[RMDB]
RNA sequence: GGGAACGACUCGAGUAGAGUCGAAAAGUGUAUAGGCAAGCCGACCCUCCGCCUAUACACGAAUUAAGGAGGGAGGAGAUCUUAUGCUCGCGAUCUUACGUCACGAGCGAGGGCCUGCGGCUCGUGACGAAUCUUACGCAGGCCAUAGCGAGCUACAAUCGUAUGCUCGAUUCGUCGAGCAUACGAUAAAAGAAACAACAACAACAAC
Reactivity to 2A3 in 0.01 (KOAc 150mM, MgCl2 10mM, bicine 150mM(pH8.5), 24C), signal-to-noise 1, nucleotides 027 to 156: g000u000g000u000a000u000a000g030g040c050a080a040g060c070c060g220a300c030c020c000u000c020c070g000c000c000u000a000u000a000c010a000c000g000a080a000u140u090a100a010g020g000a000g000g030g000a030g010g100a010g010a050u070c010u120u110a070u190g000c000u000c020g000c000g010a070u070c080u170u170a040c010g000u000c000a000c000g000a000g000c010g010a030g030g000g000c000c000u060g040c030g000g000c000u000c000g020u020g000a000c000g000a000a040u120c090u130u210a050c040g000c000a000g000g000c020c000a010u030a000g000c000g000a000g000c000u020a050c140a060
An RNA of 207 nucleotides, treated with 2A3 and read out base by base. The reactions ran in a buffer of 150 mM KOAc, 10 mM MgCl2 and 150 mM bicine (pH 8.5), at 24 C. Reactivities are given for positions 27 through 156. For 2A3 the reverse transcriptase was SuperScript II with manganese.